The record gives the reactivity of an RNA of 207 nucleotides to DMS and 2A3.
For DMS the reverse transcriptase was MarathonRT.
It was measured as part of the RMDB library M2RFPK.
2A3 adducts were read by reverse transcription with SuperScript II with manganese.
For 2A3, 3,205 sequencing reads were counted.
The RNA was probed in 150 mM KOAc, 10 mM MgCl2 and 150 mM bicine (pH 8.5) at 24 C.
RNA sequence: GGGAACGACUCGAGUAGAGUCGAAAAACAACAUGCCCAGGUAGCCCAGACCUUCAAGGCUACGGUGCGUUGCGACGCACUGUCUGAUUCUUCACAACGACGUUCACCGCGUCUUCUUCCAUCCCCCUCCAGCGCACGAAGUUCGCUUCGUGCGCAACUUUAUUCCCUUGUUCGCAAGGGAAUAAAGAAAAGAAACAACAACAACAAC
Reactivity to DMS in 0.01 (KOAc 150mM, MgCl2 10mM, bicine 150mM(pH8.5), 24C), signal-to-noise 2, nucleotides 027 to 156: a090c070a060a100c050a090u000g010c010c020c050a150g000g030u000a050g020c010c010c020a110g020a090c030c080u010u020c120a110a090g030g010c000u000a030c000g000g050u000g000c010g020u000u010g020c120g000a140c020g020c020a020c000u000g030u000c050u010g030a130u000u010c060u000u000c040a060c080a100a130c050g010a100c040g010u000u000c010a060c030c000g020c010g000u000c000u020u000c030u020u000c010c030a120u010c030c000c000c010c020u010c030c040a110g000c000g020c000a010c020g050a010a030g020u000u010c300g030c010u010u000c010g000u010g010c000g060c000a010a010
Reactivity to 2A3 in 0.01 (KOAc 150mM, MgCl2 10mM, bicine 150mM(pH8.5), 24C), signal-to-noise 3, nucleotides 027 to 156: a000c080a010a010c030a060u130g010c000c010c030a030g000g050u020a020g010c030c030c040a030g060a120c020c020u110u080c110a080a050g010g000c010u040a010c010g010g000u000g020c000g020u020u070g050c190g100a000c010g000c010a000c000u000g020u050c050u040g060a150u120u040c050u090u090c070a050c030a210a100c090g050a000c000g060u110u160c050a050c080c030g030c010g020u010c000u070u000c020u070u030c070c040a140u100c000c000c000c000c000u000c010c010a010g000c000g000c010a000c000g000a000a010g000u020u040c060g020c050u000u000c000g000u000g000c010g000c000a000a000